[RMDB]
RNA sequence: GGGAACGACUCGAGUAGAGUCGAAAACAGCUCAUUGAGCAGGACACCGGGAUCGAUCACCACGCCGUUGCCGAUAACGUUGGUGACCCCGGGCGUCAGCACACCCGACGGGAUGAGAUGCAAUGCGAUGCGUUGCAUGGUUCGCCAUGCAACGCAUAAAAGAAACAACAACAACAAC
Reactivity to DMS in 0.01 (KOAc 150mM, MgCl2 10mM, bicine 150mM(pH8.5), 24C), signal-to-noise 2, nucleotides 027 to 126: c140a140g000c080u000c000a050u000u020g000a080g090c030a190g000g020a010c060a020c000c000g000g010g000a040u000c230g000a200u010c000a020c000c000a060c080g000c210c020g020u030u010g000c200c140g000a130u020a070a020c030g020u000u000g030g040u000g010a030c000c000c020c000g000g000g010c120g000u000c000a070g000c050a120c120a070c000c000c000g010a030c140g000g000g020a050u000g010a020g000a070u040g000c180a130a040u000g020c130g020
Reactivity to 2A3 in 0.01 (KOAc 150mM, MgCl2 10mM, bicine 150mM(pH8.5), 24C), signal-to-noise 3, nucleotides 027 to 126: c010a030g040c000u000c060a270u050u260g060a060g020c050a100g070g030a000c000a000c010c000g000g000g030a050u300c140g100a120u000c020a000c030c000a040c060g170c120c040g100u110u180g080c100c080g060a040u130a180a030c040g010u000u090g000g000u000g000a020c010c000c000c000g020g000g000c020g020u000c010a000g030c030a000c000a020c000c010c000g060a060c060g070g030g010a110u100g010a060g010a040u100g030c070a080a100u130g080c040g080
Structure probing data (DMS and 2A3) for a 177-nucleotide construct. DMS adducts were read by reverse transcription with MarathonRT. Values cover nucleotides 27 to 126. For DMS, 1,926 sequencing reads were counted. 2A3 is a SHAPE reagent: it acylates the 2'-hydroxyl of flexible nucleotides of all four kinds. The RNA was probed in 150 mM KOAc, 10 mM MgCl2 and 150 mM bicine (pH 8.5) at 24 C.